Structure probing data (DMS and 2A3) for a 170-nucleotide construct. 2A3 adducts were read by reverse transcription with SuperScript II with manganese. Source: RMDB library 15KLIB, as collected in RNAgym. The reactions ran in a buffer of 150 mM KOAc, 10 mM MgCl2 and 150 mM bicine (pH 8.5), at 24 C. For DMS, 38,933 sequencing reads were counted.
RNA sequence: GGGAACGACUCGAGUAGAGUCGAAAAGGGGAAAGUAAAGAGAGCAACGGGGCUAGCGAGUGGAUGUUCCGCCUCCCCAGGGUCCCGAGUGAGGCUUAUCCCGGGGAACUCGGCCCAGUCCCGAGAUUAGCCUGAGGGUUCGCCCUCAGGAAAAGAAACAACAACAACAAC
Reactivity to DMS in 0.01 (KOAc 150mM, MgCl2 10mM, bicine 150mM(pH8.5), 24C), signal-to-noise 9, nucleotides 027 to 129: g020g000g000g010a040a060a050g040u060a030a040a050g030a060g000a080g000c060a090a100c080g010g000g010g020c010u040a090g020c070g020a090g060u050g000g010a070u030g030u010u010c060c060g020c060c030u010c050c020c020c030a050g040g020g010u020c100c010c010g030a080g000u060g030a080g010g050c150u000u010a050u020c040c010c000g000g020g020g020a130a070c050u000c050g020g050c080c050c050a190g000u030c050c000c010g020a050g010a050u000u000a100g020
Reactivity to 2A3 in 0.01 (KOAc 150mM, MgCl2 10mM, bicine 150mM(pH8.5), 24C), signal-to-noise 8, nucleotides 027 to 129: g000g000g000g020a000a040a050g050u180a060a080a020g070a010g000a010g030c010a030a080c060g030g010g020g000c020u030a030g050c020g050a050g020u070g040g040a040u080g050u120u050c030c020g050c020c010u050c010c000c000c000a010g030g010g020u030c000c000c010g000a030g020u180g030a040g040g000c020u070u070a060u060c010c000c010g000g000g000g000a020a020c020u020c010g020g000c010c010c000a020g060u060c000c000c000g010a020g020a080u060u060a020g050